The record gives the reactivity of an RNA of 177 nucleotides to 2A3.
For 2A3 the reverse transcriptase was SuperScript II with manganese.
For 2A3, 874 sequencing reads were counted.
Reactivities are given for positions 27 through 126.
[RMDB]
RNA sequence: GGGAACGACUCGAGUAGAGUCGAAAAUGCGUUCUGUAAUGGACGCAUGAACCAGGAAUUCCUAGUAGUCGCGUGUCACUAACGGGCGACGACUGCGUCCCUGUUCUUUGUACACACCGCCCGUCGUCCUCGUUUCAUAGUUCGCUAUGAAACGAGGAAAAGAAACAACAACAACAAC
Reactivity to 2A3 in 0.01 (KOAc 150mM, MgCl2 10mM, bicine 150mM(pH8.5), 24C), signal-to-noise 1, nucleotides 027 to 126: u050g000c000g000u030u020c000u020g130u060a000a200u250g000g000a020c010g020c000a000u000g000a000a040c090c010a020g040g130a040a100u100u050c040c020u020a060g030u020a020g010u060c020g060c090g100u100g020u070c040a060c070u030a080a000c040g020g000g000c110g040a020c020g010a020c040u010g030c050g010u050c030c020c000u030g050u010u010c070u080u180u180g140u120a020c040a010c020a000c000c060g000c000c000c010g080u100c010g020u040

It was measured as part of the RMDB library RFMREP. Conditions: 150 mM KOAc, 10 mM MgCl2 and 150 mM bicine (pH 8.5), 24 C.